[RMDB]
This 177-nucleotide RNA was probed chemically with DMS and 2A3. DMS (dimethyl sulfate) methylates the pairing face of unpaired adenines and cytosines. 2A3 adducts were read by reverse transcription with SuperScript II with manganese. The DMS profile rests on 1,233 reads.
RNA sequence: GGGAACGACUCGAGUAGAGUCGAAAAGAUAUGGAACGCACAACAGCUGUACGUAACAUCUAUCGGAAACGAUAGUGGUACAGACAUGUGCUUCCUAAGUCAAAAGGUACGAGUUCGCUCGUACCAAGGUGUAAGUGACGUUCGCGUCACUUACACCAAAAGAAACAACAACAACAAC
Reactivity to DMS in 0.01 (KOAc 150mM, MgCl2 10mM, bicine 150mM(pH8.5), 24C), signal-to-noise 2, nucleotides 027 to 126: g010a010u020a300u020g010g010a000a000c180g000c000a000c000a010a120c280a260g030c010u000g030u000a000c000g020u000a030a040c180a010u020c010u010a010u000c010g020g000a100a100a160c030g030a010u000a000g020u000g010g010u010a000c000a000g030a030c070a120u000g010u000g000c000u000u000c000c000u000a060a090g000u020c030a060a040a060a080g000g000u000a000c000g010a000g010u000u010c190g000c020u000c000g000u000a000c000c010a010a010
Reactivity to 2A3 in 0.01 (KOAc 150mM, MgCl2 10mM, bicine 150mM(pH8.5), 24C), signal-to-noise 2, nucleotides 027 to 126: g030a030u110a070u150g020g030a040a040c200g020c000a010c000a060a120c040a160g040c000u000g040u030a020c000g120u080a090a020c030a290u160c020u000a010u030c000g010g040a070a050a050c010g000a000u000a000g000u000g020g000u010a000c010a000g030a040c020a070u060g000u010g000c000u000u000c000c000u010a070a010g070u010c060a020a000a090a220g000g000u000a010c030g000a010g010u020u130c290g100c080u000c010g010u000a020c000c000a000a030